Structure probing data (DMS and 2A3) for a 177-nucleotide construct. For 2A3 the reverse transcriptase was SuperScript II with manganese. Source: RMDB libraries RFM100 and RFMREP, as collected in RNAgym.
RNA sequence: GGGAACGACUCGAGUAGAGUCGAAAAUGUUUUGUCCCUGGACUUUCUGACCAUCUUCCUUGUGUUCACUCAGCCUACAGAUUUGGUACCUGGAUUUCUGUCCAUGGUGAUUUCUGUCACCUUACUAGUUGUGAGUGUAGUUCGCUACACUCACAACAAAAGAAACAACAACAACAAC
Reactivity to DMS in 0.01 (KOAc 150mM, MgCl2 10mM, bicine 150mM(pH8.5), 24C), signal-to-noise 3, nucleotides 027 to 126: u010g010u000u000u000u000g000u000c000c030c000u020g010g010a100c100u000u010u030c040u010g010a150c060c030a140u010c050u000u000c040c020u000u000g010u010g010u000u000c090a070c050u000c050a090g020c030c030u010a070c090a030g000a090u000u020u000g020g010u010a020c020c010u010g000g000a080u000u030u020c160u020g000u000c050c040a040u020g020g010u000g000a030u000u000u000c060u020g000u020c050a040c040c020u020u000a060c120u010a130
Reactivity to 2A3 in 0.01 (KOAc 150mM, MgCl2 10mM, bicine 150mM(pH8.5), 24C), signal-to-noise 6, nucleotides 027 to 126: u120g040u000u100u040u120g060u000c000c000c000u000g040g000a030c000u060u080u030c040u090g060a080c020c000a040u010c020u040u030c020c000u070u100g050u010g040u120u050c020a040c040u060c010a020g040c010c000u040a030c030a060g060a100u020u070u130g090g020u030a060c020c010u020g000g050a070u090u140u050c070u140g040u000c030c020a090u100g000g000u010g010a030u070u140u080c070u090g010u010c000a030c010c000u070u130a100c060u080a080

Overview:
Reactivities are given for positions 27 through 126.